RNA sequence: GGGAACGACUCGAGUAGAGUCGAAAAAAUCUGCGGCAACGAUCGAACAAAUGCCGCCAAUGCUCCAGAAGCUGAUGCUCAAAGAGCCGGGAGCAGCAAUGUCGGCCGAUGAGCUCGAGAAGGAUCAUGAUCACUGAUGAUUCGUCAUCAGUGAUCAAAAAGAAACAACAACAACAAC
Reactivity to 2A3 in 0.01 (KOAc 150mM, MgCl2 10mM, bicine 150mM(pH8.5), 24C), signal-to-noise 1, nucleotides 027 to 126: a010a000u000c000u050g000c000g000g030c020a050a080c080g070a130u100c070g060a140a060c030a080a120a020u060g000c010c000g000c000c010a020a010u050g010c010u080c000c060a060g000a130a010g110c080u070g000a060u210g000c030u030c070a080a080a060g060a040g000c000c010g000g000g100a100g020c020a030g000c000a000a110u130g180u300c020g000g030c000c000g040a080u060g000a000g020c070u010c030g060a050g030a010a030g030g020a020u150c030a070
Reactivity to DMS in 0.01 (KOAc 150mM, MgCl2 10mM, bicine 150mM(pH8.5), 24C), signal-to-noise 3, nucleotides 027 to 126: a080a080u020c070u010g000c030g000g000c000a060a060c170g000a040u010c180g010a200a110c120a060a110a060u010g010c000c000g020c040c150a070a090u020g010c050u010c030c030a090g020a090a140g030c100u010g000a050u000g000c040u000c020a050a120a300g010a020g040c000c050g000g000g010a080g000c040a010g000c190a100a050u000g010u000c010g010g000c010c000g000a170u000g000a180g020c000u000c020g020a080g020a110a190g000g030a040u000c030a100